[RMDB]
Background: The record gives the reactivity of an RNA of 207 nucleotides to 2A3. For 2A3, 1,213 sequencing reads were counted.

RNA sequence: GGGAACGACUCGAGUAGAGUCGAAAAGCUGCGUGAAACCUCGCUGUUUUCUUGGCUAACUUUCAGCGAGGUGAGGCAUGGCGGCAAAAAAAAGUUGGGAGCAGCAACGGCAAGCAAAAAAAAAGUUACAAGUUGCGAUGGUUCGCCAUCGCAACAAGGACAUGACAUACUUCGGUAUGUCAUGUCCAAAAGAAACAACAACAACAAC
Reactivity to 2A3 in 0.01 (KOAc 150mM, MgCl2 10mM, bicine 150mM(pH8.5), 24C), signal-to-noise 1, nucleotides 027 to 156: g010c010u010g030c020g010u060g060a040a050a030c000c010u010c000g000c000u000g000u000u000u010u020c050u150u200g110g000c080u020a000a000c000u010u020u020c000a000g000c010g000a000g000g010u010g010a010g000g020c070a020u090g150g000c030g000g030c010a020a000a040a040a000a000a020a000g110u140u060g010g020g000a030g000c050a000g000c010a040a020c040g100g000c010a050a010g010c050a080a060a020a000a000a000a000a000a060g000u010u020a010c030a060a090g000u010u000g000c000g000a020u000g000g040u030u020c080g000c070c000a010u000c010g000c000a000a000c000a000a000